The record gives the reactivity of an RNA of 207 nucleotides to 2A3.
RNA sequence: GGGAACGACUCGAGUAGAGUCGAAAAAAGAAAGCUACGUGCACAGUAUUGGUUAAGGUAUUUUAACAUAAAGGAAGUCUGGCUCAUCUAUAAAGACAUGAAAACCUUAUGUCUAUGUACAAACCAAAGAAAUGACAAUGUGGCAAACCCAGUCAAACUCCCCAUUACGGUUCGCCGUAAUGGGGAGAAAAGAAACAACAACAACAAC
Reactivity to 2A3 in 0.01 (KOAc 150mM, MgCl2 10mM, bicine 150mM(pH8.5), 24C), signal-to-noise 1, nucleotides 027 to 156: a000a000g130a010a120a000g000c000u020a010c010g040u020g040c050a050c080a200g070u080a050u060u040g000g000u020u040a070a050g010g020u010a000u000u280u000u020a020a000c000a050u060a010a000a070g020g010a120a050g040u000c020u020g090g000c020u000c100a090u060c050u000a050u030a220a170a000g000a000c000a010u180g090a030a030a180a180c000c000u000u000a000u000g000u000c060u020a020u010g050u000a000c020a110a150a020c050c020a000a040a100g050a000a070a000u040g050a050c030a010a050u030g000u000g020g000c000a000a000a100c030c000c000a010g050u080c060a000a000a070
As a SHAPE reagent, 2A3 marks flexible, mostly unpaired nucleotides at the ribose 2'-OH.